[RMDB]
RNA sequence: GGGAACGACUCGAGUAGAGUCGAAAAGGACCUCUUCACCUUUUGCGCCGGUUUGUUUUAUAAAUUCGGCGUAGUAAGGUUUCAUAGCGUCUUUAAACGGUGUUAAAUCAGGAUGCGUAACGGUGACAACCUUGCUUUCUUUCGAGAAAGCAAGGUUAAAAGAAACAACAACAACAAC
Reactivity to DMS in 0.01 (KOAc 150mM, MgCl2 10mM, bicine 150mM(pH8.5), 24C), signal-to-noise 3, nucleotides 027 to 126: g010g000a100c000c000u000c080u010u010c240a100c000c000u020u000u000u000g010c000g000c020c020g000g000u000u000u000g020u010u010u060u060a060u030a010a000a020u030u040c000g000g020c000g030u000a000g010u030a030a000g010g000u000u000u010c120a070u020a050g030c190g000u000c020u000u000u010a080a090a090c100g020g030u000g000u010u020a050a090a100u000c070a090g000g010a040u000g000c090g000u000a070a080c130g000g020u010g010a110c210
Reactivity to 2A3 in 0.01 (KOAc 150mM, MgCl2 10mM, bicine 150mM(pH8.5), 24C), signal-to-noise 2, nucleotides 027 to 126: g030g020a050c000c000u030c060u130u070c040a010c000c000u000u020u000u080g000c000g020c000c000g000g040u000u000u000g090u010u160u060u060a180u240a090a140a000u280u300c000g000g020c020g000u000a000g000u000a000a010g010g000u020u050u040c040a020u010a010g000c040g000u040c000u010u120u030a090a140a030c070g050g030u070g050u160u250a120a210a110u100c030a000g040g020a070u070g080c010g020u040a000a110c040g000g030u000g020a000c020